The record gives the reactivity of an RNA of 177 nucleotides to DMS. The reactions ran in a buffer of 150 mM KOAc, 10 mM MgCl2 and 150 mM bicine (pH 8.5), at 24 C. It was measured as part of the RMDB library OK2TST. The DMS profile rests on 1,011 reads.
[RMDB]
RNA sequence: GGGAACGACUCGAGUAGAGUCGAAAAUUUUUUGGAGAUAAAGUCUGGCCCUGUUGACCAGGCUUGAGUACAGUGACGUCAUGCUAGCUCAGUGCAGCUUCGCACUCCUGGGCUCAUGCAAUCCUCCACCUAGCGACUGUUUCGACAGUCGCUAGGUAAAAGAAACAACAACAACAAC
Reactivity to DMS in 0.01 (KOAc 150mM, MgCl2 10mM, bicine 150mM(pH8.5), 24C), signal-to-noise 1, nucleotides 027 to 126: u000u010u000u000u000u000g010g010a060g000a090u010a100a040a050g000u000c000u000g000g010c020c000c100u000g030u000u000g000a170c000c000a010g000g000c000u020u000g000a100g040u000a050c100a060g000u000g000a050c230g050u010c010a070u000g000c100u000a050g020c000u000c080a080g020u000g060c090a030g020c050u000u010c240g020c050a140c010u010c030c020u000g000g000g010c000u000c030a050u000g030c170a070a070u000c100c000u000c030c060